[RMDB]
The record gives the reactivity of an RNA of 177 nucleotides to 2A3 and DMS. The 2A3 profile rests on 1,097 reads.
RNA sequence: GGGAACGACUCGAGUAGAGUCGAAAAAUCCCAAUGAUGAAUGAUAUGAAAAAAAUGUUAAAAGUAGUGACUGAUUAUACCUUGAUUACUAGUCAAUUCUGAGGGAUUAAAGGAAGGUUCGCCUUCCCCCCAUUACCAUGUUCGCAUGGUAAUGGGGAAAAGAAACAACAACAACAAC
Reactivity to 2A3 in 0.01 (KOAc 150mM, MgCl2 10mM, bicine 150mM(pH8.5), 24C), signal-to-noise 1, nucleotides 027 to 126: a000u010c000c000c000a010a070u090g020a020u050g010a000a080u010g000a010u080a090u300g180a000a060a020a010a000a090a070u120g020u080u040a060a050a030a090g030u070a040g020u000g160a020c050u030g030a140u090u190a050u110a160c000c050u070u010g000a020u130u000a020c020u030a010g080u070c010a010a170u070u030c010u050g010a030g000g020g000a010u020u060a110a020a000g000g000a010a000g040g000u040u140c100g110c030c010u000u000c020c000
Reactivity to DMS in 0.01 (KOAc 150mM, MgCl2 10mM, bicine 150mM(pH8.5), 24C), signal-to-noise 1, nucleotides 027 to 126: a070u000c000c030c000a080a150u000g010a220u020g000a100a020u000g000a020u000a130u000g020a040a010a080a070a110a000a050u010g000u000u000a140a100a110a060g010u000a160g030u000g010a010c040u010g010a090u000u020a140u000a060c080c130u000u000g020a130u000u000a020c050u020a110g000u000c040a010a070u000u000c020u010g020a260g000g040g010a010u000u010a050a020a180g010g000a000a000g010g000u000u010c300g000c020c000u000u000c000c010
High DMS reactivity at an A or C suggests that its Watson-Crick edge is free. It was measured as part of the RMDB library RFMREP.